[RMDB]
RNA sequence: GGGAACGACUCGAGUAGAGUCGAAAAAGGGAAGAAAAUAAUUUAGAAAGGAGAUUCCGCCCCAGCUUGCGGUGCGGCCGAAAGGCUGUAAGGCCUCCCGGAGAGGGGAGGCAAGGCGAAAGCCAAAAACGGUACACCAUCUUCGGAUGGUGUACAAGCUGUCAGAUAUCUUCGGAUAUCUGACAGCAAAAGAAACAACAACAACAAC
Reactivity to 2A3 in 0.01 (KOAc 150mM, MgCl2 10mM, bicine 150mM(pH8.5), 24C), signal-to-noise 1, nucleotides 027 to 156: a000g080g020g020a010a050g120a000a210a050a060u130a040a210u240u260u080a200g050a130a100a010g070g040a090g020a110u040u000c000c000g000c000c000c010c000a000g010c000u000u170g030c040g000g070u030g080c040g010g090c050c000g030a030a000a010g000g000c010u010g110u120a010a060g110g010c000c000u000c000c000c000g110g000a170g010a030g000g010g020g000a000g000g000c030a000a010g000g000c010g000a030a000a000g000c000c020a010a000a010a000a120c170g030g000u000a000c000a000c000c020a010u070c000u060u010c110g020g000a000u000g010g040u000g000u000a000c000a000a010
Overview
Chemical mapping of a 207-nucleotide RNA with 2A3. 2A3 adducts were read by reverse transcription with SuperScript II with manganese.